Notes
An RNA of 177 nucleotides, treated with DMS and 2A3 and read out base by base. DMS adducts were read by reverse transcription with MarathonRT.
RNA sequence: GGGAACGACUCGAGUAGAGUCGAAAAGGUGGUUUUACGCAUUUUUUGGAUCUUUUUUGAUCCGCUGCUUUUUUCCUUCUACGUUUGCUGAUUGGAACAGUUAGGUAGUAGCAGCUGCGUUCACCGAGGGAUUUGGCUACUUCGGUAGCCAGGUCCCAAAAGAAACAACAACAACAAC
Reactivity to DMS in 0.01 (KOAc 150mM, MgCl2 10mM, bicine 150mM(pH8.5), 24C), signal-to-noise 6, nucleotides 027 to 126: g000g020u000g000g000u030u020u020u020a030c020g020c000a020u000u010u020u030u040u030g010g010a010u000c000u000u020u030u030u040u010g000a000u000c010c000g020c010u000g000c000u000u000u020u010u010u000c010c010u000u020c050u010a060c100g000u010u010u010g010c040u010g000a200u030u030g010g010a070a070c030a050g000u010u010a020g000g010u000a020g000u010a020g000c000a010g010c010u000g010c010g010u000u020c030a020c000c000g010a130
Reactivity to 2A3 in 0.01 (KOAc 150mM, MgCl2 10mM, bicine 150mM(pH8.5), 24C), signal-to-noise 9, nucleotides 027 to 126: g020g000u030g020g060u060u110u160u200a010c010g010c020a070u050u040u030u080u180u240g000g000a000u000c020u000u210u190u080u130u270g000a000u000c000c000g000c000u000g000c000u050u070u030u020u090u100c020c000u030u040c020u040a060c050g070u040u080u090g220c050u070g090a300u200u270g090g040a090a040c010a030g040u130u070a030g010g030u010a020g010u020a000g010c000a000g000c010u030g000c000g000u010u040c000a000c000c000g000a080